This 177-nucleotide RNA was probed chemically with DMS and 2A3. For 2A3, 1,605 sequencing reads were counted. For DMS, 3,113 sequencing reads were counted. The RNA was probed in 150 mM KOAc, 10 mM MgCl2 and 150 mM bicine (pH 8.5) at 24 C.
[RMDB]
RNA sequence: GGGAACGACUCGAGUAGAGUCGAAAAGAGGUGAGAGCAAGUGUGGCUUCUCAUUAAUGUGGAUCCUCACUGAAGCUCACCAGCUGCCCAGCCUGGGGUGGAGGGUUGAGGGGCUCCCAGAGGGAGGCUCGCAUGCCGAGUUCGCUCGGCAUGCGAGAAAAGAAACAACAACAACAAC
Reactivity to DMS in 0.01 (KOAc 150mM, MgCl2 10mM, bicine 150mM(pH8.5), 24C), signal-to-noise 2, nucleotides 027 to 126: g000a110g000g010u000g000a060g010a030g000c080a170a040g030u010g040u000g010g010c100u000u020c020u000c010a100u020u080a110a120u030g000u000g010g000a010u000c000c000u000c010a000c000u020g000a100a300g000c000u010c000a010c020c060a130g000c070u010g000c010c020c010a100g010c080c130u000g000g000g000g000u010g000g030a180g000g000g030u000u050g000a090g000g000g000g010c020u000c010c010c030a180g020a170g020g010g010a040g010g020
Reactivity to 2A3 in 0.01 (KOAc 150mM, MgCl2 10mM, bicine 150mM(pH8.5), 24C), signal-to-noise 3, nucleotides 027 to 126: g120a040g020g010u020g020a060g000a000g090c100a090a040g010u010g000u010g000g020c040u030u000c040u010c020a050u140u290a110a230u210g000u030g010g010a020u040c000c000u030c000a020c000u030g050a150a030g070c010u000c010a010c000c020a010g010c000u090g000c000c000c000a030g050c000c040u050g020g010g020g070u170g030g090a140g070g030g030u130u270g040a120g000g010g000g010c010u030c000c000c040a050g110a080g020g010g000a010g020g040